[RMDB]
RNA sequence: GGGAACGACUCGAGUAGAGUCGAAAAGAUAUGGAGCCAGUCGCUCGAUAAGCUGGUAUCGGAAACGAUACGCAGCUUUUGACGAGCGUCUGGCUCCUAAGUCAAAACCUGGACUUCGGUCCAGGAACCAAGAGCGUAUCUUCGGAUACGCUCUUGGAAAAGAAACAACAACAACAAC
Reactivity to DMS in 0.01 (KOAc 150mM, MgCl2 10mM, bicine 150mM(pH8.5), 24C), signal-to-noise 1, nucleotides 027 to 126: g000a040u010a250u010g000g000a040g020c000c020a010g000u000c010g020c010u000c000g030a140u020a030a030g010c000u000g010g040u000a000u000c000g000g000a130a130a220c000g020a010u010a000c020g020c000a000g000c010u020u000u010u000g010a220c210g000a010g020c010g040u000c000u000g050g050c000u000c000c000u010a000a070g010u010c030a180a140a080a250c000c010u010g000g000a010c030u010u010c220g020g000u010c000c000a020g020g000a040a050
Chemical mapping of a 177-nucleotide RNA with DMS.
For DMS the reverse transcriptase was MarathonRT.
Conditions: 150 mM KOAc, 10 mM MgCl2 and 150 mM bicine (pH 8.5), 24 C.